[RMDB]
RNA sequence: GGGAACGACUCGAGUAGAGUCGAAAAAAAAAGAAAUGACCCGCACGGGGGAGCCGUGUGGGCCUAAGAUGUGACGAGUAUCGUUCAUCCUGCAUGCCUUUACAGACACGAUUCAGAACAGAUGGUUAGUGAUGAUCUAAUUCGUUAGAUCAUCACUAAAAGAAACAACAACAACAAC
Reactivity to 2A3 in 0.01 (KOAc 150mM, MgCl2 10mM, bicine 150mM(pH8.5), 24C), signal-to-noise 2, nucleotides 027 to 126: a000a000a000a000a000g130a010a140a040u130g030a040c000c010c000g000c010a000c000g020g010g030g020g040a040g300c020c010g020u000g000u000g000g000g000c000c000u070a040a000g010a030u080g060u110g110a030c040g030a000g090u180a080u110c020g020u010u020c000a060u070c010c000u020g010c000a030u080g050c030c000u080u130u110a060c020a030g040a020c030a010c050g080a060u080u120c040a030g030a170a050c000a020g060a100u080g190g000u030u000
Reactivity to DMS in 0.01 (KOAc 150mM, MgCl2 10mM, bicine 150mM(pH8.5), 24C), signal-to-noise 2, nucleotides 027 to 126: a020a070a070a030a100g000a090a090a040u010g010a080c010c000c040g000c000a020c070g000g000g000g010g020a130g010c050c000g030u000g020u000g050g010g000c020c020u000a100a090g030a060u020g000u010g000a110c030g000a060g050u040a070u000c000g020u000u030c010a030u020c030c030u000g020c060a080u010g000c090c040u000u000u030a060c120a110g000a010c010a030c100g010a120u020u020c060a010g000a060a030c070a060g000a080u010g000g000u010u000